[RMDB]
RNA sequence: GGGAACGACUCGAGUAGAGUCGAAAAAGAAGCGCAAAUGUAGUAGAUCCGGACGACGAGGAUGAGAAUGCGGAGCAUGGAUGGUGUUCAAACCAUCAUCAGGAGCAAUUACUCGGAUUAUGUGGUACCAAUACUUGGCGUUCGCGCCAAGUAUUGGAAAAGAAACAACAACAACAAC
Reactivity to DMS in 0.01 (KOAc 150mM, MgCl2 10mM, bicine 150mM(pH8.5), 24C), signal-to-noise 2, nucleotides 027 to 126: a070g010a130a070g010c050g010c070a020a050a080u010g000u010a100g000u010a110g010a060u010c080c050g010g000a050c030g030a080c050g010a060g000g000a080u000g010a080g020a030a100u010g000c030g010g000a090g020c110a090u000g010g000a000u000g000g010u000g010u000u000c300a080a090a040c160c010a000u000c030a090u000c040a060g000g000a130g000c050a020a080u010u020a150c050u000c030g000g000a090u020u000a030u030g000u000g010g010u010a150
Reactivity to 2A3 in 0.01 (KOAc 150mM, MgCl2 10mM, bicine 150mM(pH8.5), 24C), signal-to-noise 1, nucleotides 027 to 126: a010g080a040a000g100c040g000c050a060a030a070u140g020u090a020g010u000a010g030a070u000c040c000g010g000a010c020g020a000c010g040a070g020g020a020u030g030a000g090a060a050u090g000c040g050g020a020g080c060a060u110g050g000a030u000g000g000u010g040u150u130c060a110a030a020c000c000a000u010c000a020u010c010a020g150g010a060g020c000a000a060u050u050a080c000u000c050g040g050a020u050u050a120u170g110u040g120g070u090a090